[RMDB]
RNA sequence: GGGAACGACUCGAGUAGAGUCGAAAAUAGACAGGGUCACUGACAGGUGUCACAAAGUCUGGUUGGUGGCUUACAGGCAUGACACAACAGGAACAUUCGAAGCAGGAGUGGACGAGAAAACGGCAGAUCUGUCCGCUGUGAUGACGGGAUUACCUAACCAGUGAUAAUCGUUCGCGAUUAUCACUGGAAAAGAAACAACAACAACAAC
Reactivity to DMS in 0.01 (KOAc 150mM, MgCl2 10mM, bicine 150mM(pH8.5), 24C), signal-to-noise 2, nucleotides 027 to 156: u000a070g020a120c070a170g020g000g040u000c010a120c020u000g010a150c100a080g050g060u000g000u000c050a300c080a080a110a130g020u010c050u010g000g000u010u010g010g000u000g020g000c080u010u010a040c080a120g020g030c020a140u000g010a060c070a090c010a070a030c060a110g050g000a060a090c030a150u000u010c060g020a100a110g000c070a040g000g040a080g080u000g010g020a040c020g000a110g010a100a040a090a060c050g050g000c110a070g000a080u000c010u010g020u010c000c060g090c020u000g000u000g030a090u000g000a060c010g020g030g020a150u000u000a100c040c000u010a050a270
Reactivity to 2A3 in 0.01 (KOAc 150mM, MgCl2 10mM, bicine 150mM(pH8.5), 24C), signal-to-noise 3, nucleotides 027 to 156: u170a020g070a020c020a010g010g010g060u020c000a010c030u020g030a020c040a080g050g000u030g020u050c020a050c030a090a170a000g040u020c000u010g080g000u030u040g010g000u010g000g000c000u010u090a000c020a020g010g000c020a020u090g040a060c020a000c000a070a070c020a010g020g020a040a020c020a050u030u090c100g040a060a000g000c020a000g000g050a010g020u060g020g010a010c080g020a040g050a050a050a030a020c030g060g020c000a020g040a110u010c020u070g020u020c000c020g020c040u070g030u060g030a070u080g020a020c010g010g000g050a050u110u100a100c020c010u030a040a050